An RNA of 177 nucleotides, treated with 2A3 and DMS and read out base by base. Values cover nucleotides 27 to 126. Conditions: 150 mM KOAc, 10 mM MgCl2 and 150 mM bicine (pH 8.5), 24 C. For 2A3 the reverse transcriptase was SuperScript II with manganese. Source: RMDB libraries RFM100 and RFMREP, as collected in RNAgym.
RNA sequence: GGGAACGACUCGAGUAGAGUCGAAAAGUCUUUUAAAACGCUUCCACGGGACAUGGGUUCUAAUUAUGGAGAAGAUCAAGCUUUGAAAUGGCCCGUUUACACAUUUUGAUACAACCGUAGACGGCGUGUUAAGAGUCUUUUUCGAAAGACUCUUAACAAAAGAAACAACAACAACAAC
Reactivity to 2A3 in 0.01 (KOAc 150mM, MgCl2 10mM, bicine 150mM(pH8.5), 24C), signal-to-noise 7, nucleotides 027 to 126: g010u000c020u000u090u040u080a060a120a020a020c020g000c010u050u010c000c000a010c000g000g020g010a030c050a090u070g040g000g000u150u130c090u130a180a250u250u100a090u220g030g020a060g020a060a030g020a030u150c090a070a050g100c020u060u050u090g040a060a060a020u050g060g000c000c000c000g020u030u060u090a040c070a010c020a090u060u140u130u210g060a060u060a100c070a050a010c050c010g000u010a020g010a030c060g010g000c020g000u030
Reactivity to DMS in 0.01 (KOAc 150mM, MgCl2 10mM, bicine 150mM(pH8.5), 24C), signal-to-noise 4, nucleotides 027 to 126: g020u000c020u000u010u010u000a020a060a140a130c070g010c020u000u010c010c050a040c020g000g000g020a090c110a050u000g010g000g020u000u030c080u020a060a090u020u010a050u000g000g010a210g000a060a040g000a090u030c150a100a080g010c020u010u000u020g010a110a070a060u000g000g010c050c000c040g010u000u020u010a060c120a080c140a110u000u000u000u010g010a120u000a070c230a040a110c070c070g010u000a030g010a010c190g000g010c040g020u020